[RMDB]
RNA sequence: GGGAACGACUCGAGUAGAGUCGAAAACACCCCCUGGUUGCUGCUCUCAGGCACACCAAAUGAAAAAUUGGUGACAACCUCCACGGCGCCUGAUUUUGUAGCAUUUAAUGUCUUUCAGGGCAUUGAAAAACUGCGAAGUUCGCUUCGCAGAAAAGAAACAACAACAACAAC
Reactivity to DMS in 0.01 (KOAc 150mM, MgCl2 10mM, bicine 150mM(pH8.5), 24C), signal-to-noise 4, nucleotides 027 to 129: c120a000c020c030c010c060c030u060g060g010u050u030g030c030u000g000c030u010c050u020c030a000g060g010c030a300c000a020c040c000a000a000a000u140g000a110a170a100a160a080u020u030g030g000u000g000a150c200a060a130c030c040u030c060c170a090c130g000g030c140g010c070c010u030g010a040u000u010u030u010g050u000a030g040c030a000u000u010u050a030a020u000g010u020c010u000u000u000c280a000g030g000g030c020a000u110u000g020a050a050a050a090a080
Reactivity to 2A3 in 0.01 (KOAc 150mM, MgCl2 10mM, bicine 150mM(pH8.5), 24C), signal-to-noise 6, nucleotides 027 to 129: c060a050c000c030c000c000c000u040g160g010u040u090g010c010u010g010c010u010c010u020c020a010g000g000c010a020c000a000c040c000a020a020a030u260g120a080a030a040a020a030u040u010g010g010u030g020a060c080a040a080c020c010u130c150c060a100c110g040g000c020g010c010c000u000g010a050u070u090u120u120g040u030a000g000c000a000u010u010u000a000a010u010g010u010c010u040u300u070c070a050g090g000g060c000a000u010u030g060a020a020a030a030a040